RNA sequence: GGGAACGACUCGAGUAGAGUCGAAAACGACAAGGGUGUAAAGAUCGCUCUUUUACUCGGCAUGAUACCACCGUUAUCGGGUCAACAUAGUAGUUGCAAAUGACAACAAUGCUCAGGGUUAUGCUCUAAAAGUUCGUACCCUUCGGGGUACGAACAACAGAGUAUGAAGCUUCGGCUUCAUACUCUGAAAAGAAACAACAACAACAAC
Reactivity to DMS in 0.01 (KOAc 150mM, MgCl2 10mM, bicine 150mM(pH8.5), 24C), signal-to-noise 1, nucleotides 027 to 156: c050g010a160c120a060a080g010g000g040u000g000u000a130a050a190g000a140u000c080g040c070u010c050u010u010u010u010a110c030u010c000g000g000c010a080u000g040a190u010a080c050c010a070c000c030g060u000u000a100u010c080g000g030g020u020c050a060a070c090a080u020a060g020u010a040g010u000u000g020c000a030a120a160u000g010a070c000a040a030c010a050a060u000g000c000u010c030a100g000g030g010u000u000a090u010g010c000u010c020u000a070a080a090a140g010u000u010c000g000u000a020c000c000c000u000u000c300g050g010g050g030u000a010c020g000a000a010c010a060a070
Reactivity to 2A3 in 0.01 (KOAc 150mM, MgCl2 10mM, bicine 150mM(pH8.5), 24C), signal-to-noise 5, nucleotides 027 to 156: c060g090a000c070a040a040g030g070g010u040g050u140a120a180a040g100a110u180c030g000c040u040c000u020u080u020u060a110c070u020c020g020g000c020a010u100g000a010u060a060c010c000a010c020c020g140u100u080a040u130c030g000g000g030u040c010a010a040c030a030u170a020g120u040a020g010u030u020g020c040a080a170a210u210g040a100c010a040a010c010a030a140u100g010c030u030c080a020g020g030g030u070u060a050u160g000c000u020c020u100a040a120a040a030g000u000u000c000g010u000a000c000c000c000u000u020c180g020g000g000g000u000a000c000g000a000a000c000a000a000
This 207-nucleotide RNA was probed chemically with DMS and 2A3. The DMS profile rests on 2,269 reads. 2A3 adducts were read by reverse transcription with SuperScript II with manganese. For 2A3, 3,073 sequencing reads were counted. Values cover nucleotides 27 to 156. It was measured as part of the RMDB library M2RFPK. For DMS the reverse transcriptase was MarathonRT.